[RMDB]
RNA sequence: GGGAACGACUCGAGUAGAGUCGAAAAAUAAAGAGCGUACAUCUCUCUCAGACUGUACGACAGUCUGACUCUCUCGUACAAUCGGUCAACGAGAGAGAGAGAGCGUUCAAAGAAGCGAGAAAAAAAAUCAUCGUUACAUGUUCGCAUGUAACGAUGAAAAAGAAACAACAACAACAAC
Reactivity to DMS in 0.01 (KOAc 150mM, MgCl2 10mM, bicine 150mM(pH8.5), 24C), signal-to-noise 2, nucleotides 027 to 126: a080u020a040a060a160g000a010g000c020g000u000a200c090a300u000c000u000c010u020c170u000c000a050g000a000c000u020g010u000a110c300g010a120c030a000g010u000c010u000g010a120c300u010c000u000c070u030c000g010u000a090c060a100a150u000c150g020g040u000c110a120a010c010g000a010g000a010g010a010g010a050g000a020g000a150g000c000g050u010u000c010a040a020a210g010a050a090g040c080g020a130g090a040a000a000a020a080a100a110a180
Reactivity to 2A3 in 0.01 (KOAc 150mM, MgCl2 10mM, bicine 150mM(pH8.5), 24C), signal-to-noise 2, nucleotides 027 to 126: a010u210a010a130a010g020a000g020c020g020u060a070c080a260u000c000u000c000u000c000u000c000a000g000a000c010u030g000u140a140c080g100a080c050a000g000u000c010u030g030a060c010u000c000u000c000u000c010g030u020a070c070a060a280u240c190g090g040u130c060a000a020c020g020a050g000a000g000a000g000a000g000a010g010a010g030c000g010u000u000c020a080a050a000g100a030a000g160c080g030a030g240a150a030a010a010a020a020a010a050
Chemical mapping of a 177-nucleotide RNA with DMS and 2A3. The data come from the RNA Mapping Database (RMDB), library M2PK90. The reactions ran in a buffer of 150 mM KOAc, 10 mM MgCl2 and 150 mM bicine (pH 8.5), at 24 C. For 2A3 the reverse transcriptase was SuperScript II with manganese. For 2A3, 2,120 sequencing reads were counted. Values cover nucleotides 27 to 126.